[RMDB]
RNA sequence: GGGAACGACUCGAGUAGAGUCGAAAAGUCACUGCAGACAGUCAGUAGUUGGUCUGGCAUAAGCAGAAAGUUUCAGAUCACCUCUUGGCUGUGAGUAGUGUGGAGCCAAAACCCGUCUUCGGACGGGCUCGAAUCCAAUGUUCGCAUUGGAUUCGAGAAAAGAAACAACAACAACAAC
Reactivity to 2A3 in 0.01 (KOAc 150mM, MgCl2 10mM, bicine 150mM(pH8.5), 24C), signal-to-noise 1, nucleotides 027 to 126: g130u080c000a010c010u000g000c010a010g040a270c000a000g020u020c020a000g030u050a000g000u070u000g020g010u010c010u000g000g010c010a050u140a270a110g200c220a040g240a050a130a010g050u050u130u060c010a000g000a010u000c010a010c040c000u000c010u020u000g000g010c010u030g010u030g050a010g040u010a010g000u020g000u060g080g040a040g120c040c000a110a080a030a080c010c000c000g010u080c000u000u050c140g100g010a010c000g020g000g000
Reactivity to DMS in 0.01 (KOAc 150mM, MgCl2 10mM, bicine 150mM(pH8.5), 24C), signal-to-noise 1, nucleotides 027 to 126: g000u000c010a000c000u010g070c010a100g000a070c040a030g000u000c010a010g050u000a000g000u000u000g000g010u000c000u000g050g000c200a090u000a050a100g010c300a200g010a230a130a080g000u000u000u000c000a020g000a040u000c010a020c140c000u000c020u000u000g010g000c000u000g030u020g010a160g000u010a020g010u000g060u000g020g000a220g010c000c070a120a060a050a240c000c000c000g010u000c000u000u020c160g010g000a020c010g000g000g000

Structure probing data (2A3 and DMS) for a 177-nucleotide construct. For 2A3, 884 sequencing reads were counted. High DMS reactivity at an A or C suggests that its Watson-Crick edge is free. Values cover nucleotides 27 to 126. For DMS, 762 sequencing reads were counted. The reactions ran in a buffer of 150 mM KOAc, 10 mM MgCl2 and 150 mM bicine (pH 8.5), at 24 C.